[RMDB]
Structure probing data (DMS and 2A3) for a 207-nucleotide construct. For DMS the reverse transcriptase was MarathonRT. Source: RMDB library M2RFPK, as collected in RNAgym. For DMS, 2,290 sequencing reads were counted.
RNA sequence: GGGAACGACUCGAGUAGAGUCGAAAAACUCCUAUUCCAACACGUCCUCGUCGUACAGCGUGGUAACAUGUGUCACCACAUAUCCAAGCUUGGGUACACGGGCUUGACCCAACCCCUUGGGCGGAUGAAAACCAGAUUACGUUCGCGUAAUCUGGAACGAUUUCUUCAAGUUCGCUUGAAGAAAUCGAAAAGAAACAACAACAACAAC
Reactivity to DMS in 0.01 (KOAc 150mM, MgCl2 10mM, bicine 150mM(pH8.5), 24C), signal-to-noise 1, nucleotides 027 to 156: a050c020u010c040c020u000a040u000u050c070c020a050a130c120a100c050g000u030c020c000u000c080g000u000c070g000u010a080c090a080g010c070g080u000g040g000u000a000a040c020a220u000g000u000g020u010c070a070c040c000a080c030a090u070a020u000c020c010a040a300g000c020u000u020g030g010g050u000a120c110a120c110g000g040g010c050u000u000g000a090c000c000c000a050a050c080c020c010c010u010u000g010g000g060c260g010g000a100u000g010a060a010a080a190c000c000a000g000a040u000u000a010c000g040u000u030c300g000c040g050u000a000a010u000c000u000g020g020a000a040
Reactivity to 2A3 in 0.01 (KOAc 150mM, MgCl2 10mM, bicine 150mM(pH8.5), 24C), signal-to-noise 5, nucleotides 027 to 156: a000c070u090c030c010u070a100u120u030c080c040a050a020c020a010c080g030u030c000c020u050c030g060u050c060g060u130a120c090a060g010c020g050u020g000g050u050a070a020c050a140u160g070u060g070u150c050a040c090c010a040c030a070u120a010u020c000c000a000a020g020c010u020u030g000g010g000u030a030c040a050c070g010g000g020c030u160u220g160a300c000c000c000a010a040c010c000c000c000u000u000g000g010g000c020g010g030a010u080g060a040a030a010a040c000c000a000g000a000u000u000a000c010g030u020u040c210g000c010g100u000a010a000u000c000u000g000g000a000a000